Notes:
Chemical mapping of a 177-nucleotide RNA with 2A3 and DMS. The RNA was probed in 150 mM KOAc, 10 mM MgCl2 and 150 mM bicine (pH 8.5) at 24 C. DMS adducts were read by reverse transcription with MarathonRT. The 2A3 profile rests on 3,028 reads.
RNA sequence: GGGAACGACUCGAGUAGAGUCGAAAAGAUUUACGGCGGGAAACGUCCCGGGUGCGCGCCGAAGUCCCGGGUGCGGCACCGACCGAAAGGCGCUGAAACGGCACCGACCGAAACCGCCGGAAAGAAAACCUAGUAGGUAUUUCGAUACCUACUAGGUAAAAGAAACAACAACAACAAC
Reactivity to 2A3 in 0.01 (KOAc 150mM, MgCl2 10mM, bicine 150mM(pH8.5), 24C), signal-to-noise 2, nucleotides 027 to 126: g060a020u090u090u090a050c000g020g000c000g010g020g070a160a070a000c000g030u060c010c030c020g010g010g000u020g000c050g000c000g000c010c000g030a060a020g090u070c030c000c000g020g010g010u050g000c000g090g000c040a020c020c000g040a030c020c020g010a120a020a010g000g000c020g000c040u080g060a140a160a090c040g020g000c010a050c110c060g070a120c030c010g030a090a030a020c010c000g000c000c030g010g020a030a060a010g030a000a090a000
Reactivity to DMS in 0.01 (KOAc 150mM, MgCl2 10mM, bicine 150mM(pH8.5), 24C), signal-to-noise 4, nucleotides 027 to 126: g010a130u010u000u010a100c020g020g020c000g000g000g000a110a090a300c160g000u010c010c120c050g010g010g040u000g020c030g000c010g030c000c010g020a120a140g000u000c030c020c010g000g000g020u010g020c020g010g030c010a040c020c040g000a100c100c070g010a050a110a120g010g000c000g000c020u010g010a100a130a200c060g000g000c020a070c050c060g020a120c050c020g010a070a140a130c020c000g000c010c000g000g010a030a050a080g000a120a070a100